[RMDB]
RNA sequence: GGGAACGACUCGAGUAGAGUCGAAAAGGAUCAAAAGCUGCAAGCCGAGGUGCCGUUACCUCGUAAAACAACGGCAAAAAAGAAGUGCCAACACAAAUUUAGCAUUAGCUGCUUAAUUUAGCAGCUACGCUCUUCUAACCCGGGCUGGCAGGGUUAGGCUGUGACUAUCCUUCGGGAUAGUCACAGCAAAAGAAACAACAACAACAAC
Reactivity to 2A3 in 0.01 (KOAc 150mM, MgCl2 10mM, bicine 150mM(pH8.5), 24C), signal-to-noise 3, nucleotides 027 to 156: g030g020a050u090c080a030a030a050a100g030c050u110g080c050a090a010g060c020c000g000a010g010g010u000g010c010c000g000u000u030a010c010c000u020c020g140u130a010a000a000a000c000a000a000c000g000g000c010a060a010a000a060a000a000g080a030a000g010u060g050c020c020a040a000c010a070c030a150a070a020u150u200u100a030g020c030a080u060u030a000g000c000u010g000c010u080u050a100a090u300u170u200a050g000c000a000g000c000u000a000c020g000c000u030c010u090u010c000u010a010a010c000c000c000g000g090g000c040u060g030g000c010a020g000g000g000u000u000a000g000